Source: RMDB library ARCHII, as collected in RNAgym. The record gives the reactivity of an RNA of 207 nucleotides to 2A3.
[RMDB]
RNA sequence: GGGAACGACUCGAGUAGAGUCGAAAAGUAAAACAGCAACAAAAAUAACUGUAAACAACGCAGAUUACGCUCCAGCUUACGCUAAAGCUGCGUGAGUUAAUCUCCUUUUGGAGCUGGACUGAUUAGAAUUUCUAGCGUUUUAAUCGCUCCAUAACCUCAUUUCUCACUUGUUCGCAAGUGAGAAAUGAAAAGAAACAACAACAACAAC
Reactivity to 2A3 in 0.01 (KOAc 150mM, MgCl2 10mM, bicine 150mM(pH8.5), 24C), signal-to-noise 4, nucleotides 027 to 156: g030u040a010a070a060a060c020a020g090c030a010a080c040a100a180a070a050a050u140a070a060c010u060g020u090a070a120a060c010a040a040c050g000c020a030g010a100u020u110a040c070g000c000u010c000c000a010g020c020u010u010a000c010g000c020u100a190a110a200g170c180u040g010c020g010u000g000a000g000u010u060a080a070u060c070u080c060c020u030u150u120u120g010g000a000g020c000u020g000g000a010c030u040g000a020u040u050a020g020a080a050u060u120u170c080u110a070g030c000g040u000u000u000u040a050a040u030c010g010c040u010c020c000a070u060a070a070c010c020u000
The 2A3 profile rests on 1,684 reads.
The RNA was probed in 150 mM KOAc, 10 mM MgCl2 and 150 mM bicine (pH 8.5) at 24 C.